[RMDB]
RNA sequence: GGGAACGACUCGAGUAGAGUCGAAAAGACUUGUGGUUCGCCACAAGUCAAAUAAGCAUCUAGAAAUGGCCAAACUACAUGCAUCGAAAGAAAGGCCAUAAAAAAGGACAUGCUUCGGCAUGUCCAAGAUCCCUCAUUACUUCGGUAAUGAGGGAUCAAAAGAAACAACAACAACAAC
Reactivity to 2A3 in 0.01 (KOAc 150mM, MgCl2 10mM, bicine 150mM(pH8.5), 24C), signal-to-noise 2, nucleotides 027 to 126: g010a000c010u000u000g000u010g020g040u020u050c170g050c080c000a000c010a020a010g000u000c000a000a000a000u010a020a020g020c010a010u000c030u050a020g040a020a060a010u000g010g010c000c020a020a040a010c010u040a000c000a030u010g050c000a160u120c170g140a090a090a110g110a090a110a020g000g000c000c020a010u050a000a020a020a000a000a010g000g000a000c000a000u010g000c000u040u010c070g040g000c000a010u000g000u010c000c000a000a010
Reactivity to DMS in 0.01 (KOAc 150mM, MgCl2 10mM, bicine 150mM(pH8.5), 24C), signal-to-noise 1, nucleotides 027 to 126: g030a000c000u020u030g000u000g000g030u000u020c270g010c000c000a010c000a000a010g000u010c000a010a140a040u000a060a160g000c000a010u000c150u000a010g000a000a000a010u000g020g000c030c000a170a250a040c050u000a020c080a030u000g020c030a040u000c290g010a060a080a100g000a070a120a060g040g020c000c020a040u000a020a080a040a030a000a080g020g010a020c040a010u010g020c010u000u000c170g040g000c000a000u000g000u000c000c010a000a030